[RMDB]
RNA sequence: GGGAACGACUCGAGUAGAGUCGAAAAACUCCCUCCGUCCUAAUAUAUAAGGCGUAACCACUUUUUAAUCAUGUCCUAUAAUACAAAGCGUGCCCUCUCACAGACAUUAAUGCAGUAGUACUAGUGCCUAAGUGCUAUAGUUCGCUAUAGCACUUAGAAAAGAAACAACAACAACAAC
Reactivity to 2A3 in 0.01 (KOAc 150mM, MgCl2 10mM, bicine 150mM(pH8.5), 24C), signal-to-noise 4, nucleotides 027 to 126: a010c010u040c010c010c000u010c020c000g040u070c000c000u060a110a080u150a050u050a010u030a190a030g020g010c020g030u020a020a020c030c010a040c080u110u120u040u020u280a050a070u090c050a050u080g050u020c010c000u120a080u070a300a060u110a070c080a050a120a020g050c020g060u050g010c020c000c010u030c000u020c000a040c020a030g090a020c010a030u080u110a070a020u090g020c010a020g030u090a000g000u000a040c010u030a030g050u010g060c000
Reactivity to DMS in 0.01 (KOAc 150mM, MgCl2 10mM, bicine 150mM(pH8.5), 24C), signal-to-noise 6, nucleotides 027 to 126: a100c170u000c010c000c010u000c090c030g020u000c020c020u000a080a100u010a120u010a100u010a110a080g000g000c050g010u000a080a110c090c040a070c050u010u000u000u020u010a050a100u010c090a070u000g000u010c010c010u000a090u000a070a070u010a070c150a050a060a080g010c080g020u000g000c020c010c010u000c040u000c080a080c100a050g010a060c050a040u000u000a040a070u000g020c040a060g000u000a060g010u000a060c050u000a040g010u000g010c090
An RNA of 177 nucleotides, treated with 2A3 and DMS and read out base by base. The 2A3 profile rests on 3,318 reads. Values cover nucleotides 27 to 126.